[RMDB]
RNA sequence: GGGAACGACUCGAGUAGAGUCGAAAAAGACUGCCAUUACGAUGGCAGUCAACGGGGGCCCAAGGUGAGAUGAAGCUGUAGUCUCACUGGAAGGACUAGAGGUUAGAUUAGACCCCCCCAAAACAAAUCUUCAUCAACUGUUCGCAGUUGAUGAAGAAAAAGAAACAACAACAACAAC
Reactivity to 2A3 in 0.01 (KOAc 150mM, MgCl2 10mM, bicine 150mM(pH8.5), 24C), signal-to-noise 2, nucleotides 027 to 126: a030g010a000c000u000g000c000c000a010u040u020a080c260g100a020u020g000g000c000a000g000u000c000a000a010c010g010g000g010g000g000c000c010c030a020a020g050g000u020g000a010g000a000u070g090a290a020g120c060u090g030u080a010g000u010c000u000c000a000c010u000g000g010a030a060g000g010a020c080u110a070g030a030g090g010u080u070a040g040a300u120u100a040g060a070c000c010c000c000c050c000c050a030a070a000a000c030a010a060a000
Reactivity to DMS in 0.01 (KOAc 150mM, MgCl2 10mM, bicine 150mM(pH8.5), 24C), signal-to-noise 2, nucleotides 027 to 126: a100g040a000c030u000g000c000c000a000u020u070a060c230g020a080u000g000g000c010a000g000u000c010a000a000c180g000g000g040g010g000c000c000c010a280a130g000g030u010g030a090g020a020u000g000a120a060g010c020u000g010u020a300g000u000c000u000c000a000c000u000g000g000a040a200g000g000a100c150u010a040g010a110g030g020u010u010a090g000a120u010u030a200g000a050c020c040c010c000c000c050c010a070a000a100a150c230a030a100a150
Annotation:
Conditions: 150 mM KOAc, 10 mM MgCl2 and 150 mM bicine (pH 8.5), 24 C. Chemical mapping of a 177-nucleotide RNA with 2A3 and DMS. Values cover nucleotides 27 to 126. The DMS profile rests on 1,940 reads. The data come from the RNA Mapping Database (RMDB), library RFM100. Values are in units of 0.01, from 0 to 300, in steps of 10.